This 207-nucleotide RNA was probed chemically with 2A3 and DMS. 2A3 adducts were read by reverse transcription with SuperScript II with manganese. It was measured as part of the RMDB library RNAMAK.
[RMDB]
RNA sequence: GGGAACGACUCGAGUAGAGUCGAAAAGUGCAUUCGUGCACCAAAUACCGUAGGACGUGAACGCGAAGCCUAACGAAGAACAAUCUUUCGAAAGAGAGAUUGGGAGUUAGGACCCUUCUAAGCACGUCCUAAACGGGGCAUGCUCAUUCGUGAGCAACUAAGUUUCAUUUUUCGAAAUGAAACUUAGAAAAGAAACAACAACAACAAC
Reactivity to 2A3 in 0.01 (KOAc 150mM, MgCl2 10mM, bicine 150mM(pH8.5), 24C), signal-to-noise 9, nucleotides 027 to 156: g020u010g010c010a020u080u180c250g120u090g020c010a010c010c020a040a110a070u240a130c000c020g030u030a010g000g000a000c010g010u010g010a210a050c050g030c050g080a020a020g050c000c000u000a000a010c010g200a300a060g020a050a010c000a000a000u000c000u010u010u000c020g050a100a090a050g010a010g000a000g000a000u000u010g000g000g000a030g000u000u000a000g000g030a010c090c010c000u000u010c010u030a070a030g020c000a000c000g000u000c000c000u000a000a000a000c000g000g000g040g030c090a090u100g000c010u000c010a050u120u050c170g150u060g040a000g010c000a000a030
Reactivity to DMS in 0.01 (KOAc 150mM, MgCl2 10mM, bicine 150mM(pH8.5), 24C), signal-to-noise 3, nucleotides 027 to 156: g000u000g000c020a070u000u000c220g050u000g060c000a010c010c020a040a040a070u010a060c010c010g020u000a050g000g000a030c000g020u000g010a050a100c090g020c220g020a050a050g000c000c000u000a000a010c000g010a160a170g010a130a180c010a010a020u000c010u000u000u010c000g010a250a140a300g010a020g010a010g010a030u000u000g000g000g020a190g030u000u000a010g000g010a090c080c250c020u000u010c020u000a210a110g020c010a010c000g000u000c000c000u000a010a030a080c040g000g000g000g010c070a030u000g000c000u000c010a060u000u000c120g010u000g010a010g010c000a080a240